RNA sequence: GGGAACGACUCGAGUAGAGUCGAAAAAAGAUGACUGCCUAGACGUCAUUGAAGACAUCACAUAUAGGGGAGUCACGAGCAUAAGAAAGUUAGGUUACUUCCGUGAUAUGGUGCCAGGACCUGGAAGACCCAUGUGUAACUUCGGUUACACAUGGGUAAAAGAAACAACAACAACAAC
Reactivity to 2A3 in 0.01 (KOAc 150mM, MgCl2 10mM, bicine 150mM(pH8.5), 24C), signal-to-noise 2, nucleotides 027 to 126: a020a020g070a090u060g000a020c050u050g080c020c060u050a080g000a070c060g020u050c020a050u080u170g070a050a000g030a020c040a010u020c030a070c040a050u290a010u170a190g000g060g030g000a000g000u020c030a000c000g010a050g000c030a050u140a220a090g070a160a060a010g140u110u110a080g100g000u060u040a100c050u070u030c010c000g090u030g050a040u020a040u270g000g000u000g000c000c000a030g000g070a020c040c000u030g050g090a050a080g030
Reactivity to DMS in 0.01 (KOAc 150mM, MgCl2 10mM, bicine 150mM(pH8.5), 24C), signal-to-noise 2, nucleotides 027 to 126: a080a090g010a120u000g010a040c020u000g000c030c040u000a060g010a030c080g010u000c020a110u000u010g010a100a120g020a030c000a020u010c020a090c190a150u000a150u020a120g040g000g000g000a070g030u000c010a020c080g020a100g030c080a040u000a100a100g010a080a060a030g000u010u000a040g000g010u000u000a060c050u000u000c040c000g000u010g010a040u000a040u000g010g050u000g020c030c020a100g010g010a100c020c010u000g020g010a080a060g020